The record gives the reactivity of an RNA of 177 nucleotides to DMS.
The reactions ran in a buffer of 150 mM KOAc, 10 mM MgCl2 and 150 mM bicine (pH 8.5), at 24 C.
The DMS profile rests on 696 reads.

RNA sequence: GGGAACGACUCGAGUAGAGUCGAAAACUCAACAAGUUCAGAAUGCUCCGCAGAGGAUUCCUCAGCACGUACCGAUGCCUCAAGGAGUAGCUCCACAUCAAGUUAUUCAACAAGUUCGUGCACCCAAUGAUAGCCUCGUAUUCGUACGAGGCUAUCAAAAAGAAACAACAACAACAAC
Reactivity to DMS in 0.01 (KOAc 150mM, MgCl2 10mM, bicine 150mM(pH8.5), 24C), signal-to-noise 1, nucleotides 027 to 126: c010u020c010a090a140c160a070a130g000u000u010c040a110g000a120a180u010g030c000u000c050c020g080c180a220g030a040g000g010a120u000u000c010c020u000c080a150g000c000a040c110g020u010a180c040c050g000a080u000g000c010c030u000c030a040a280g010g000a070g000u000a030g010c010u000c010c030a040c030a110u000c070a180a050g000u010u000a070u000u000c110a100a070c110a170a060g010u010u000c030g030u000g020c140a200c040c040c010a060a160